[RMDB]
RNA sequence: GGGAACGACUCGAGUAGAGUCGAAAAAUCUGAAUGAACAUGCAAACCUGCUUGCAGUCGGCGGCAAUGAUAAUUCUUGUAGCUUAUGGGAUAUUUCCGACGUACCAGGAGACCAACUUGACGAACAGAGCAUCAGCCGUUUCGACGGCUGAUGCUCAAAAGAAACAACAACAACAAC
Reactivity to 2A3 in 0.01 (KOAc 150mM, MgCl2 10mM, bicine 150mM(pH8.5), 24C), signal-to-noise 1, nucleotides 027 to 126: a000u130c140u170g300a100a060u010g000a000a000c000a000u110g000c050a070a060a040c000c000u000g080c030u020u040g010c030a090g020u000c000g040g000c000g050g000c000a100a000u220g040a150u080a040a110u090u090c000u060u040g150u040a000g010c040u130u030a040u110g000g010g000a000u000a060u110u250u000c050c010g090a090c050g000u000a060c040c050a000g000g140a060g050a000c000c000a000a060c040u060u150g060a040c040g000a120a000c010a200

Source information: The data come from the RNA Mapping Database (RMDB), library OK1LIB. An RNA of 177 nucleotides, treated with 2A3 and read out base by base. The 2A3 profile rests on 367 reads. 2A3 adducts were read by reverse transcription with SuperScript II with manganese.